Structure probing data (DMS and 2A3) for a 177-nucleotide construct. 2A3 adducts were read by reverse transcription with SuperScript II with manganese.
RNA sequence: GGGAACGACUCGAGUAGAGUCGAAAAGAGCUGUAGUACAGCAAGAAGCACGCGAUCCUUGGCACCGCGUGCAAGAGAAUCAAGCCGGCAAAGAAGGAAAGCCGGCAUAAGUGCCAAGUAAGAGAGAACUACGAUAGGGAUUCGUCCCUAUCGUAGUAAAAGAAACAACAACAACAAC
Reactivity to DMS in 0.01 (KOAc 150mM, MgCl2 10mM, bicine 150mM(pH8.5), 24C), signal-to-noise 4, nucleotides 027 to 126: g010a160g010c010u000g010u000a140g030u030a300c030a020g000c020a090a210g000a180a100g000c000a000c010g000c010g010a180u010c070c010u000u000g000g010c000a020c000c000g000c000g000u000g000c020a020a030g010a220g040a180a140u010c110a110a110g000c010c010g020g000c000a060a090a210g010a160a120g010g000a170a080a190g010c010c000g000g000c060a000u000a020a030g020u000g010c000c010a000a000g010u100a090a080g020a140g000a170g010a050
Reactivity to 2A3 in 0.01 (KOAc 150mM, MgCl2 10mM, bicine 150mM(pH8.5), 24C), signal-to-noise 4, nucleotides 027 to 126: g130a020g000c020u030g000u100a100g050u140a120c000a000g010c010a000a020g120a050a000g020c000a000c000g010c000g000a060u120c030c000u010u000g000g000c000a000c000c000g000c000g000u010g000c000a010a000g020a000g070a050a040u230c120a140a010g000c000c000g020g000c030a060a080a210g130a170a030g120g100a140a120a000g000c000c000g000g000c010a000u010a000a000g010u000g000c000c040a010a010g010u060a090a010g090a010g000a000g010a040